[RMDB]
RNA sequence: GGGAACGACUCGAGUAGAGUCGAAAACAUGACUACUUCGGUAGUCAUGAAAAAAACCUUUGUGGUAGAAGCUCGAAGAACUAUCUAUUGCCCAUUGGGCAACGAUAGGGAGAGCCUACCACUCUGGUAAAAAGAUGUGCCGUUCGCGGCACAUCAAUAGAAAUCAUACGUUCGCGUAUGAUUUCUAAAAAGAAACAACAACAACAAC
Reactivity to DMS in 0.01 (KOAc 150mM, MgCl2 10mM, bicine 150mM(pH8.5), 24C), signal-to-noise 1, nucleotides 027 to 156: c000a040u000g000a070c000u000a010c030u000u030c280g060g010u000a010g020u010c000a010u010g000a000a000a020a130a110a180a110c000c000u000u000u000g030u010g050g110u000a000g010a190a170g040c000u010c000g000a120a210g000a080a240c010u000a000u000c030u010a110u000u000g010c010c000c020a300u000u010g080g010g000c000a000a000c260g020a020u000a030g000g000g000a160g000a020g020c000c000u000a030c000c000a040c000u000c000u000g010g000u000a010a030a050a200a150g000a000u000g000u000g020c000c000g000u000u010c300g000c060g040g020c020a000c000a000u000c000a020a110
Reactivity to 2A3 in 0.01 (KOAc 150mM, MgCl2 10mM, bicine 150mM(pH8.5), 24C), signal-to-noise 3, nucleotides 027 to 156: c010a000u000g000a000c000u000a010c000u070u050c300g110g000u000a000g010u000c000a000u000g000a070a000a000a000a000a000a010c010c000u000u000u000g000u000g010g010u000a010g030a300a050g020c010u040c030g160a300a040g010a040a020c010u000a000u000c000u020a220u080u030g000c000c000c110a300u170u300g010g000g000c000a000a020c020g000a000u000a000g000g000g000a020g000a000g000c000c000u000a000c000c000a000c000u000c000u000g000g030u090a090a070a060a010a040g010a010u010g000u000g010c000c000g000u030u170c300g020c010g110g000c000a000c000a000u000c000a000a000